RNA sequence: GGGAACGACUCGAGUAGAGUCGAAAAGAUAUGGAGCGUGUUAAGUGCUGUGUAUCGGAAACGAUACCAGCUCAAACCGCUCCUAAGUCAAAACUGAUAUGCCCUAGUUCGCUAGGGCAUAUCAGAACACUCUAGAUAGCUUCGGCUAUCUAGAGUGAAAAGAAACAACAACAACAAC
Reactivity to 2A3 in 0.01 (KOAc 150mM, MgCl2 10mM, bicine 150mM(pH8.5), 24C), signal-to-noise 5, nucleotides 027 to 126: g010a010u060a030u140g010g010a000g000c030g020u300g040u300u130a300a230g050u060g120c020u040g110u060g000u220a000u000c010g030g000a060a040a010c010g000a000u000a000c000c000a010g000c010u000c010a040a040a000c000c000g000c000u020c000c000u000a020a000g020u010c020a010a020a150a210c010u010g000a010u000a010u020g000c000c000c000u000a000g020u060u080c300g010c200u000a000g000g000g000c000a000u000a000u000c000a000g000a000a000
Reactivity to DMS in 0.01 (KOAc 150mM, MgCl2 10mM, bicine 150mM(pH8.5), 24C), signal-to-noise 3, nucleotides 027 to 126: g000a020u000a300u000g000g010a000g020c000g020u010g020u000u000a100a110g000u000g000c000u010g000u010g010u000a000u010c000g000g000a100a080a140c000g000a000u010a000c000c010a000g000c000u010c020a070a040a020c020c010g000c010u000c010c010u000a000a040g000u000c020a110a100a110a230c000u000g000a010u000a000u000g000c000c000c000u000a010g010u000u000c190g000c010u000a010g010g000g000c000a010u000a000u000c000a000g000a080a180
Notes:
The record gives the reactivity of an RNA of 177 nucleotides to 2A3 and DMS. DMS (dimethyl sulfate) methylates the pairing face of unpaired adenines and cytosines. It was measured as part of the RMDB library TTRDEL.